RNA sequence: GGGAACGACUCGAGUAGAGUCGAAAAUACGACGUAUUCGUACGUCGUAAAGGUACGAAAGUACAAAGGACCAAAAGCAUGAGCUCCUAAAAAUCAUGCAAAACACGAGCCGAUUCGUCGGCUCGAAGGUCAACCAUAAGUUCGCUUAUGGUUGACCAAAAGAAACAACAACAACAAC
Reactivity to 2A3 in 0.01 (KOAc 150mM, MgCl2 10mM, bicine 150mM(pH8.5), 24C), signal-to-noise 2, nucleotides 027 to 126: u030a000c000g000a000c000g000u000a000u020u100c200g000u010a000c000g010u000c000g000u000a020a040a010g070g000u010a000c000g040a170a030a030g000u000a010c020a010a140a000g070g030a010c020c010a000a070a090a060g020c000a010u000g010a020g030c050u090c100c100u210a080a060a000a020a030u020c000a010u010g020c000a000a130a000a000c130a010c020g000a000g000c010c000g020a020u020u050c220g060u000c000g100g000c000u010c000g000a000a010
Reactivity to DMS in 0.01 (KOAc 150mM, MgCl2 10mM, bicine 150mM(pH8.5), 24C), signal-to-noise 1, nucleotides 027 to 126: u000a020c010g000a000c010g020u000a060u000u000c130g090u000a010c020g010u000c000g020u000a010a120a160g010g010u000a030c020g020a090a070a200g000u000a000c020a040a180a080g000g020a130c060c010a030a070a060a110g000c000a000u000g000a030g010c190u000c130c060u020a000a060a060a030a140u020c000a010u010g000c000a080a010a080a110c240a130c000g000a000g000c010c000g010a050u000u010c120g000u000c000g020g040c000u000c000g010a050a000